[RMDB]
RNA sequence: GGGAACGACUCGAGUAGAGUCGAAAAAAUUGGGUUCCAACAGGCAGGACAACCUGGUCCCUGCAUGGAAAGGGAGAGUGGAUGACGAAUGAAGACAUGCUGGAAGUCUGGAACAGGGUGUGGAUCAAAUACUGGCAGGGUUCGCCCUGCCAGUAUUAAAAGAAACAACAACAACAAC
Reactivity to DMS in 0.01 (KOAc 150mM, MgCl2 10mM, bicine 150mM(pH8.5), 24C), signal-to-noise 1, nucleotides 027 to 126: a080a090u020u000g020g000g030u000u000c040c010a120a150c070a040g000g000c020a040g030g000a060c160a150a060c120c080u000g020g010u030c090c000c030u000g000c050a080u000g010g000a070a070a060g000g010g000a020g010a060g020u010g030g010a110u020g000a070c110g010a090a050u000g000a070a010g000a030c070a060u020g010c020u000g020g020a050a140g000u000c050u010g000g000a050a050c090a080g010g020g010u000g040u000g010g000a070u010c120a030

This 177-nucleotide RNA was probed chemically with DMS. The RNA was probed in 150 mM KOAc, 10 mM MgCl2 and 150 mM bicine (pH 8.5) at 24 C. Values cover nucleotides 27 to 126.